[RMDB]
RNA sequence: GGGAACGACUCGAGUAGAGUCGAAAAAACAGCGGGGAAAGAAGACCCUGUUGAGCUUGACUCUAGUCUGAUAUUGCAUAGUGACCUAAAAGGUGUAGAAUAGGUGGGAGGGGCAACCCGACGGUGACAACAAAUUGCGUUUCGACGCAAUUUGUUGAAAAGAAACAACAACAACAAC
Reactivity to DMS in 0.01 (KOAc 150mM, MgCl2 10mM, bicine 150mM(pH8.5), 24C), signal-to-noise 3, nucleotides 027 to 126: a120a050c030a020g000c020g020g000g000g000a120a100a100g020a160a160g010a110c000c020c000u000g010u000u000g000a080g030c100u010u000g010a030c010u010c000u010a050g000u000c000u040g010a060u010a050u040u010g020c080a040u010a110g000u010g010a120c010c040u020a060a080a140a070g000g000u020g020u010a020g000a090a070u000a070g020g010u000g000g010g010a150g000g000g000g000c050a050a080c030c010c040g010a070c120g020g000u000g010a140
Reactivity to 2A3 in 0.01 (KOAc 150mM, MgCl2 10mM, bicine 150mM(pH8.5), 24C), signal-to-noise 2, nucleotides 027 to 126: a020a060c120a060g000c070g020g000g000g060a020a160a170g300a090a000g080a300c020c000c000u020g000u000u000g000a010g000c090u000u040g000a030c020u000c030u010a070g070u030c010u020g050a060u050a150u170u060g020c000a050u030a190g060u050g110a030c000c030u060a010a170a000a000g000g060u000g000u030a010g040a240a040u040a030g000g040u010g070g010g060a050g000g000g000g000c010a010a060c010c000c000g000a000c070g000g090u080g000a050
Structure probing data (DMS and 2A3) for a 177-nucleotide construct. The RNA was probed in 150 mM KOAc, 10 mM MgCl2 and 150 mM bicine (pH 8.5) at 24 C. Values cover nucleotides 27 to 126. 2A3 adducts were read by reverse transcription with SuperScript II with manganese. For 2A3, 1,401 sequencing reads were counted. DMS adducts were read by reverse transcription with MarathonRT.